[RMDB]
RNA sequence: GGGAACGACUCGAGUAGAGUCGAAAACACUAAAUUUACUUUGUGGAACUACUUGUUUGAGACUAUUCCCACACAGUUGUUCCCACUCUUAUUUGUGACUAUGGCCUUCGUUAUGUUGUUGGUUAAAAUAGCUGUAUCUUCGGAUACAGCAAAAGAAACAACAACAACAAC
Reactivity to DMS in 0.01 (KOAc 150mM, MgCl2 10mM, bicine 150mM(pH8.5), 24C), signal-to-noise 1, nucleotides 027 to 129: c080a070c110u050a020a300a020u030u030u030a000c190u000u000u000g000u000g000g000a160a180c080u060a220c210u000u000g000u050u070u000g000a130g000a000c110u000a300u120u000c000c160c000a120c290a100c190a000g070u000u000g080u010u000c060c000c050a160c000u070c050u000u000a240u020u020u020g020u000g000a000c220u000a000u130g170g000c000c090u050u000c010g060u000u000a050u010g060u000u300g120u120u000g000g000u050u110a100a030a050a210u000a020
Reactivity to 2A3 in 0.01 (KOAc 150mM, MgCl2 10mM, bicine 150mM(pH8.5), 24C), signal-to-noise 1, nucleotides 027 to 129: c000a000c080u300a090a000a090u050u210u300a030c080u150u150u100g050u070g060g060a080a080c000u070a000c000u130u100g000u290u000u060g020a170g000a000c000u000a120u030u160c000c130c000a000c000a000c060a080g000u000u130g000u000u000c000c000c000a080c030u300c170u300u110a200u000u030u080g000u000g000a000c120u000a000u230g000g000c080c050u000u250c000g300u300u000a180u170g110u020u000g000u000u000g070g000u000u020a000a040a030a040u000a000
Chemical mapping of a 170-nucleotide RNA with DMS and 2A3. For 2A3 the reverse transcriptase was SuperScript II with manganese. The 2A3 profile rests on 380 reads. Source: RMDB library 15KLIB, as collected in RNAgym.